[RMDB]
Structure probing data (2A3) for a 207-nucleotide construct. For 2A3, 655 sequencing reads were counted. The reactions ran in a buffer of 150 mM KOAc, 10 mM MgCl2 and 150 mM bicine (pH 8.5), at 24 C.
RNA sequence: GGGAACGACUCGAGUAGAGUCGAAAAUAAUCCCGUUUCGACGGGAUUAAAAAAGCGUACUACGUCGCGAAGAACGAGAACUACCAGAUAUCCCAAAUAGGAUAUCCUGGCUCGGGAGCGACGUAUCGCAAAAAAUGUAAGGCUUCGGCCUUACAAACUUAGUCCACGAGUUCGCUCGUGGACUAAGAAAAGAAACAACAACAACAAC
Reactivity to 2A3 in 0.01 (KOAc 150mM, MgCl2 10mM, bicine 150mM(pH8.5), 24C), signal-to-noise 1, nucleotides 027 to 156: u050a000a000u000c010c000c000g000u000u000u070c150g040a000c000g000g000g050a000u010u040a000a000a000a000a000a020g000c000g010u020a030c080u000a020c010g000u000c000g000c000g010a170a020g030a010a020c020g300a000g180a060a100c120u300a010c050c000a000g000a000u000a000u090c050c020c070a250a220a030u240a060g010g010a000u030a000u030c050c130u000g000g000c000u000c000g000g000g000a010g000c000g000a010c000g000u010a000u000c000g000c010a020a010a020a020a020a020u090g000u000a000a000g010g010c010u020u300c300g040g040c000c000u000u000a000c000a000a000a010